This 177-nucleotide RNA was probed chemically with DMS and 2A3. For DMS, 2,201 sequencing reads were counted. Source: RMDB library M2PK90, as collected in RNAgym. For DMS the reverse transcriptase was MarathonRT. For 2A3, 2,020 sequencing reads were counted.

RNA sequence: GGGAACGACUCGAGUAGAGUCGAAAAAUAAAGAGCGUAAACGCCUCAUUGAGUGACGUGAAGAUCAUCCAAGUGUGCUGUCUACAGUCGUAGAUAGCGCACAUUACGCUAAGAUGAUCAUAAAAAACUAGACAAGAGUGUUCGCACUCUUGUCUAGAAAAGAAACAACAACAACAAC
Reactivity to DMS in 0.01 (KOAc 150mM, MgCl2 10mM, bicine 150mM(pH8.5), 24C), signal-to-noise 3, nucleotides 027 to 126: a130u020a070a090a100g010a100g010c000g000u010a040a110a070c010g010c020c000u000c000a180u020u000g010a080g020u000g010a120c030g010u000g000a110a120g010a000u000c000a010u000c020c100a060a100g030u000g010u000g020c000u010g030u000c000u000a010c000a190g010u020c200g010u000a000g000a000u000a000g000c010g050c000a000c000a060u000u010a040c000g000c040u010a080a120g000a010u010g000a010u000c010a090u010a010a110a050a050a060a080
Reactivity to 2A3 in 0.01 (KOAc 150mM, MgCl2 10mM, bicine 150mM(pH8.5), 24C), signal-to-noise 3, nucleotides 027 to 126: a000u240a020a090a020g080a010g000c030g000u030a140a150a020c020g010c030c000u040c030a280u070u300g030a020g020u050g010a060c040g020u020g080a140a040g000a010u000c000a010u000c020c020a080a130g000u000g010u010g000c010u000g030u000c000u000a080c100a270g200u300c240g000u090a000g000a000u010a000g000c000g000c000a000c000a000u000u020a010c000g000c040u040a000a030g000a010u010g010a010u020c040a020u300a000a150a000a000a000a000